[RMDB]
RNA sequence: GGGAACGACUCGAGUAGAGUCGAAAAGAUAUGGAAAUGUGCCACGAGGAUCGUCGUAUAUGUCUACCCACCUUGUUCGGAAACGAACAAGAGGACAUAUACGACGGGAGUGGCCAUUUCCUAAGUCCAGUAAGUGACAGUUCGCUGUCACUUACUGAAAAGAAACAACAACAACAAC
Reactivity to 2A3 in 0.01 (KOAc 150mM, MgCl2 10mM, bicine 150mM(pH8.5), 24C), signal-to-noise 2, nucleotides 027 to 126: g050a070u150a140u300g000g080a020a010a020u090g190u300g060c000c010a020c030g060a300g090g000a030u030c020g010u000c010g010u010a000u010a000u010g000u030c010u030a190c140c000c000a060c000c020u000u020g000u000u010c000g010g050a180a130a110c010g010a000a010c000a000a020g000a000g000g000a000c000a010u000a000u000a000c000g000a010c010g010g020g000a000g000u000g000g000c000c000a000u000u000u000c000c000u000a020a010g030u000c030
Reactivity to DMS in 0.01 (KOAc 150mM, MgCl2 10mM, bicine 150mM(pH8.5), 24C), signal-to-noise 3, nucleotides 027 to 126: g020a090u010a300u010g000g000a010a000a000u000g000u030g010c020c000a010c000g000a150g020g020a070u010c010g000u020c000g010u010a010u000a010u000g000u010c000u000a120c030c100c130a300c090c000u000u000g010u000u000c020g000g000a180a090a200c000g000a010a020c000a000a010g000a070g010g000a000c000a000u000a000u010a000c010g000a000c000g010g000g000a020g020u000g000g030c000c000a000u000u000u010c000c000u010a030a100g010u000c060